[RMDB]
RNA sequence: GGGAACGACUCGAGUAGAGUCGAAAAUGUUGGACGAGACCACCUCGGAUCUGGGUGGGUACAAGGACGCGACGUUGGCGAUUGCCAGCAAAGCCGACACCCCCGACGGGGUGUGGUCGCGCAUGAAACGGCUACUUACUUUCGAGUAAGUAGCCGUAAAAGAAACAACAACAACAAC
Reactivity to DMS in 0.01 (KOAc 150mM, MgCl2 10mM, bicine 150mM(pH8.5), 24C), signal-to-noise 1, nucleotides 027 to 126: u000g010u000u030g020g010a030c030g030a170g010a070c040c020a010c000c000u000c020g040g040a090u020c140u010g010g030g000u000g020g020g060u000a040c190a080a110g000g000a300c170g000c010g000a180c150g090u000u000g010g000c020g050a160u000u020g000c000c040a000g000c010a080a150a190g020c010c000g080a130c130a080c000c000c000c010c020g040a140c090g000g000g020g000u020g000u000g020g000u020c000g000c020g000c180a090u000g000a070a180
Description:
Chemical mapping of a 177-nucleotide RNA with DMS. Conditions: 150 mM KOAc, 10 mM MgCl2 and 150 mM bicine (pH 8.5), 24 C.